[RMDB]
RNA sequence: GGGAACGACUCGAGUAGAGUCGAAAAUUAAAGCGCGAAAAAGAUCGAUCGAUCGUUUGAACGCGCAAGUCGAAGUUUGAUACGGGCAUACUAGCUAGCUAGCUAGCAAUACAAACUUCGUAAAAAAGUCAUUUAAGUUCUUCGGAACUUAAAUGACAAAAGAAACAACAACAACAAC
Reactivity to DMS in 0.01 (KOAc 150mM, MgCl2 10mM, bicine 150mM(pH8.5), 24C), signal-to-noise 2, nucleotides 027 to 126: u010u010a090a040a150g000c000g050c000g000a030a110a010a080a090g000a000u000c000g000a180u000c190g020a020u000c000g010u010u000u000g020a180a110c010g020c000g060c000a070a070g030u000c000g010a010a010g020u000u000u000g010a130u010a040c200g030g020g000c100a160u000a070c020u000a010g010c010u000a130g030c140u000a060g000c010u000a070g000c010a110a040u010a030c010a000a010a010c010u000u000c000g010u000a000a040a060a060a030a030
Reactivity to 2A3 in 0.01 (KOAc 150mM, MgCl2 10mM, bicine 150mM(pH8.5), 24C), signal-to-noise 1, nucleotides 027 to 126: u110u090a100a110a010g010c010g000c020g080a010a100a000a000a070g010a030u010c050g020a080u190c130g000a010u000c080g130u000u040u090g100a130a020c040g000c010g000c010a010a000g040u000c020g000a010a010g000u010u020u020g120a110u110a100c040g080g010g030c000a050u050a180c020u010a010g020c010u000a030g130c030u040a020g000c010u000a000g000c050a050a010u060a150c000a000a000a010c000u010u010c000g000u070a010a000a000a040a000a040